[RMDB]
RNA sequence: GGGAACGACUCGAGUAGAGUCGAAAAGAGCGGCUCGGCGAUCCAGCGAGCCAGCUCGGCCCGGCCGCUGUCGGAGAUCGCGUAUACCUUCUUGUCGGGCCGGCCAUGCUGGAGCACGGUCGUCGCGCGUAGGGAAAAAUUUCGAUUUUUCCCUACGAAAAGAAACAACAACAACAAC
Reactivity to DMS in 0.01 (KOAc 150mM, MgCl2 10mM, bicine 150mM(pH8.5), 24C), signal-to-noise 8, nucleotides 027 to 126: g000a120g020c050g010g000c020u010c020g010g010c030g000a040u010c030c070a130g020c010g010a120g020c070c060a020g010c010u010c050g020g020c040c040c020g020g010c020c160g000c100u000g010u000c100g010g000a070g000a030u000c110g010c100g000u000a090u020a100c050c030u000u000c040u000u000g020u000c010g010g000g020c010c000g000g000c040c040a090u000g000c010u000g000g000a100g010c020a060c080g000g010u000c050g010u000c020g010c100g010
Reactivity to 2A3 in 0.01 (KOAc 150mM, MgCl2 10mM, bicine 150mM(pH8.5), 24C), signal-to-noise 9, nucleotides 027 to 126: g060a010g030c060g040g000c050u030c070g050g000c030g030a040u030c020c010a010g010c010g030a030g070c010c010a010g010c030u050c030g000g000c010c020c000g000g000c020c020g080c120u130g040u090c050g080g060a140g020a130u110c060g010c060g170u120a060u080a190c020c020u070u070c030u130u130g020u040c050g010g000g020c010c000g000g000c030c020a100u210g000c000u020g010g020a040g010c020a020c090g030g020u060c020g000u000c010g000c010g010

Source information
The data come from the RNA Mapping Database (RMDB), library OK2TST. Chemical mapping of a 177-nucleotide RNA with DMS and 2A3. Values are in units of 0.01, from 0 to 300, in steps of 10. Values cover nucleotides 27 to 126.